Chemical mapping of a 177-nucleotide RNA with DMS and 2A3. The data come from the RNA Mapping Database (RMDB), library M2PK50.

RNA sequence: GGGAACGACUCGAGUAGAGUCGAAAACAGAACUAAUUCGUUAGUUCUGGCAUAUAACCUUCACCAAUUACGUUCAAAUAAGUGGUAAAAAUAAAAAUAAAACGGGGUCUGCAUUCGUGCAGACCAACUAUUCGUAAUUAUUCGUAAUUACGAAUAGAAAAGAAACAACAACAACAAC
Reactivity to DMS in 0.01 (KOAc 150mM, MgCl2 10mM, bicine 150mM(pH8.5), 24C), signal-to-noise 3, nucleotides 027 to 126: c010a000g000a020a010c010u000a000a030u000u010c220g010u000u000a010g000u000u010c000u000g000g020c120a110u010a150u020a110a120c020c000u010u000c160a010c010c010a060a060u000u000a020c040g010u010u000c220a100a100a170u010a020a040g000u000g000g000u000a020a050a060a070a070u030a020a060a050a070a100u010a060a020a060a060c090g010g010g000g010u010c000u000g010c000a030u010u010c130g000u000g030c000a000g000a000c000c000a010a040
Reactivity to 2A3 in 0.01 (KOAc 150mM, MgCl2 10mM, bicine 150mM(pH8.5), 24C), signal-to-noise 4, nucleotides 027 to 126: c000a000g020a000a000c000u020a020a020u080u120c160g040u040u000a010g000u010u000c000u000g020g010c060a110u230a020u020a100a070c000c000u050u090c060a020c040c010a020a020u040u050a060c040g050u100u200c060a030a110a120u060a160a040g030u030g000g020u070a060a100a030a020a010u190a050a090a010a020a020u170a040a050a070a020c030g300g090g000g000u000c000u000g000c010a020u000u080c130g050u050g010c000a000g010a000c000c000a000a000

The DMS profile rests on 2,653 reads.